The record gives the reactivity of an RNA of 177 nucleotides to 2A3 and DMS.
RNA sequence: GGGAACGACUCGAGUAGAGUCGAAAAGAAUAACAGAUGAAGGGGACUAUCAGGUAAAACUCCGCAGCCUGAUUCGCUUUCUCGAAUGCGCAGUGGAAGUUAUUAAAAUGCCAAGAGGAAAACUCAACAUCAGGGAGCUAUUCGUAGCUCCCUGAUGAAAAGAAACAACAACAACAAC
Reactivity to 2A3 in 0.01 (KOAc 150mM, MgCl2 10mM, bicine 150mM(pH8.5), 24C), signal-to-noise 2, nucleotides 027 to 126: g050a050a030u110a130a080c100a020g080a100u090g090a100a000g030g000g000g000a000c040u040a090u060c040a000g060g010u130a050a000a070a140c050u040c020c040g000c000a000g070c000c000u020g000a000u050u040c000g000c070u020u030u030c000u000c040g000a030a020u120g000c030g000c010a020g010u090g080g040a110a040g000u000u010a010u040u200a050a140a040a010u110g040c020c000a090a000g040a040g010g060a060a020a140a090c050u040c020a030a010
Reactivity to DMS in 0.01 (KOAc 150mM, MgCl2 10mM, bicine 150mM(pH8.5), 24C), signal-to-noise 2, nucleotides 027 to 126: g010a090a030u010a060a100c100a090g000a090u080g000a030a100g040g000g000g030a050c300u020a040u000c030a020g000g040u000a070a050a070a010c070u000c010c060g040c040a190g010c000c020u000g010a040u000u000c030g000c100u000u000u000c050u000c030g000a100a020u010g030c180g040c090a010g020u000g000g000a050a120g000u000u010a020u040u000a000a030a040a100u050g000c000c000a030a120g000a030g000g000a080a060a090a090c070u050c060a060a270

The data come from the RNA Mapping Database (RMDB), library OK1LIB. The RNA was probed in 150 mM KOAc, 10 mM MgCl2 and 150 mM bicine (pH 8.5) at 24 C. 2A3 adducts were read by reverse transcription with SuperScript II with manganese.